[RMDB]
RNA sequence: GGGAACGACUCGAGUAGAGUCGAAAAGCUUGGAGGGGCUCAGGCAAAAAGGAUGGAGCAUCCUCAAUUUACUCGUUAUUCGAAGAGAGGCUAAAAUAAGAAAUACUAGAGUGCAAACUCUAGCUCAGUCGUAGUUGAUAUUCGUAUCAACUACGACAAAAGAAACAACAACAACAAC
Reactivity to 2A3 in 0.01 (KOAc 150mM, MgCl2 10mM, bicine 150mM(pH8.5), 24C), signal-to-noise 3, nucleotides 027 to 126: g010c020u040u070g080g020a050g000g000g000g030c010u000c030a030g080g000c000a100a030a070a080a020g110g020a070u120g050g020a010g020c020a060u100c000c000u000c000a040a060u100u080u110a040c010u000c010g030u060u120a150u250u130c050g070a110a020g050a020g000a020g020g000c040u100a130a050a030a030u160a100a060g070a070a100a020u090a070c010u000a010g000a000g000u010g000c020a030a100a080c000u000c000u000a010g040c020u040c060a020
Reactivity to DMS in 0.01 (KOAc 150mM, MgCl2 10mM, bicine 150mM(pH8.5), 24C), signal-to-noise 3, nucleotides 027 to 126: g020c050u000u000g000g030a060g040g000g010g010c020u010c030a120g000g000c120a050a050a070a130a090g000g000a080u010g010g010a060g020c040a050u000c000c010u000c050a070a050u010u000u000a090c030u000c030g020u000u010a190u010u000c110g010a040a050g000a090g020a060g000g000c080u000a040a040a050a080u000a070a100g010a090a130a110u010a170c000u010a000g000a010g010u000g000c190a030a140a050c000u000c010u000a010g020c120u010c140a130